RNA sequence: GGGAACGACUCGAGUAGAGUCGAAAAAAUGAACCAUUUAACUCACCUUUAUCAUUAUGCCCGAUAAUUCUAACUUGAACAGAUUCACCUAAUCUUGGUUCAGCUUUACGUUCUGAUUCAUGUACGAAGGAUAUGUGCAGUUCGCUGCACAUAUCCUAAAAGAAACAACAACAACAAC
Reactivity to DMS in 0.01 (KOAc 150mM, MgCl2 10mM, bicine 150mM(pH8.5), 24C), signal-to-noise 1, nucleotides 027 to 126: a040a050u010g010a100a020c010c020a030u040u020u020a080a140c050u010c070a070c010c030u000u010u010a040u020c050a020u010u000a040u000g010c040c030c030g000a100u040a050a070u010u000c070u000a140a070c080u000u000g000a050a020c080a020g010a030u010u000c070a080c070c040u030a030a030u000c090u010u000g010g000u000u000c010a070g000c220u010u000u000a050c130g040u010u000c020u000g000a140u000u000c030a040u000g020u000a160c190g010a120
Reactivity to 2A3 in 0.01 (KOAc 150mM, MgCl2 10mM, bicine 150mM(pH8.5), 24C), signal-to-noise 2, nucleotides 027 to 126: a000a030u090g020a030a050c030c010a060u100u120u060a090a030c060u060c050a080c000c000u060u050u090a100u050c020a060u010u080a030u220g000c000c010c030g090a090u120a100a060u240u060c050u040a010a260c010u040u000g000a020a010c000a030g040a050u110u060c030a040c090c030u120a140a070u090c080u050u040g040g000u040u020c010a020g000c050u090u080u080a110c070g060u100u020c020u000g060a300u040u080c010a020u120g020u020a030c060g030a030
An RNA of 177 nucleotides, treated with DMS and 2A3 and read out base by base.
The RNA was probed in 150 mM KOAc, 10 mM MgCl2 and 150 mM bicine (pH 8.5) at 24 C.
The data come from the RNA Mapping Database (RMDB), library OK2TRN.
For DMS, 894 sequencing reads were counted.